Structure probing data (2A3 and DMS) for a 177-nucleotide construct. 2A3 adducts were read by reverse transcription with SuperScript II with manganese. Reactivities are rounded to 0.1 and cut off at 0 and 3. The 2A3 profile rests on 879 reads. The data come from the RNA Mapping Database (RMDB), library RFM100.
RNA sequence: GGGAACGACUCGAGUAGAGUCGAAAAAACAGGGUGAUAGUCCCGUACUGCAGGCGAGUAUCGGACGCGUCAGCUCCAGAGUAUCGGGGGUUGGAUAUCCCUCGUGAAUAUUGCAGGCAUCGACUGCACAUGCGCACCCUUUCGAGGGUGCGCAUGUAAAAGAAACAACAACAACAAC
Reactivity to 2A3 in 0.01 (KOAc 150mM, MgCl2 10mM, bicine 150mM(pH8.5), 24C), signal-to-noise 2, nucleotides 027 to 126: a000a000c050a050g000g030g000u020g000a160u030a100g040u020c000c000c020g000u010a000c000u030g050c010a110g150g000c030g070a000g000u050a010u110c010g090g000a020c010g000c040g110u030c000a020g010c000u000c000c020a060g060a000g300u120a080u190c030g000g000g000g000g000u000u080g030g000a030u150a150u110c000c000c000u010c010g000u000g040a040a080u200a060u080u040g000c000a020g000g030c040a040u080c060g070a120c030u000g000c020
Reactivity to DMS in 0.01 (KOAc 150mM, MgCl2 10mM, bicine 150mM(pH8.5), 24C), signal-to-noise 1, nucleotides 027 to 126: a170a060c080a030g000g000g030u010g000a060u000a080g000u000c000c050c020g080u020a050c000u020g030c070a090g040g000c150g000a060g000u040a010u020c300g000g030a000c140g030c010g040u000c060a010g010c000u000c030c030a110g000a140g000u000a030u010c050g000g000g060g000g010u020u010g030g030a050u010a040u000c020c000c000u000c070g010u000g010a180a010u020a000u010u040g000c000a000g010g040c040a100u020c090g020a100c010u020g000c040